The record gives the reactivity of an RNA of 177 nucleotides to 2A3 and DMS. The data come from the RNA Mapping Database (RMDB), library TTRDEL. DMS adducts were read by reverse transcription with MarathonRT. For DMS, 1,295 sequencing reads were counted. As a SHAPE reagent, 2A3 marks flexible, mostly unpaired nucleotides at the ribose 2'-OH. Conditions: 150 mM KOAc, 10 mM MgCl2 and 150 mM bicine (pH 8.5), 24 C.
[RMDB]
RNA sequence: GGGAACGACUCGAGUAGAGUCGAAAAGAUAUGGAGAAGACGAGCAAUGAUGUAUGGGAGAACUCGGAAACGAGACCCAUAUUGAGCUCCUCUUCUCCUAAGUCGGAGGCCUAGUUCGCUAGGCCAACACUGAGAGAAGCUUCGGCUUCUCUCAGUGAAAAGAAACAACAACAACAAC
Reactivity to 2A3 in 0.01 (KOAc 150mM, MgCl2 10mM, bicine 150mM(pH8.5), 24C), signal-to-noise 1, nucleotides 027 to 126: g000a010u020a000u080g010g010a010g000a000a020g000a000c020g020a000g030c020a120a300u140g030a020u080g050u040a010u000g040g020g000a190g070a300a120c050u020c010g010g060a090a000a010c020g020a000g080a100c000c000c000a000u020a010u020u020g010a000g000c000u000c010c010u000c010u000u010c000u040c000c000u010a010a010g010u000c030g050g060a090g010g010c000c000u010a000g010u030u090c280g000c160u000a000g000g000c000c000a000a000
Reactivity to DMS in 0.01 (KOAc 150mM, MgCl2 10mM, bicine 150mM(pH8.5), 24C), signal-to-noise 1, nucleotides 027 to 126: g020a020u000a280u000g000g000a020g000a010a000g000a010c240g000a020g030c000a220a120u000g000a080u000g000u010a020u000g000g000g000a250g030a090a080c020u000c000g020g000a060a050a060c000g000a010g000a110c020c000c010a000u000a010u000u000g000a080g000c000u000c010c090u000c000u000u000c000u010c000c000u010a000a040g010u000c020g000g010a170g000g020c000c000u000a000g020u010u020c250g010c000u000a010g000g040c000c020a000a070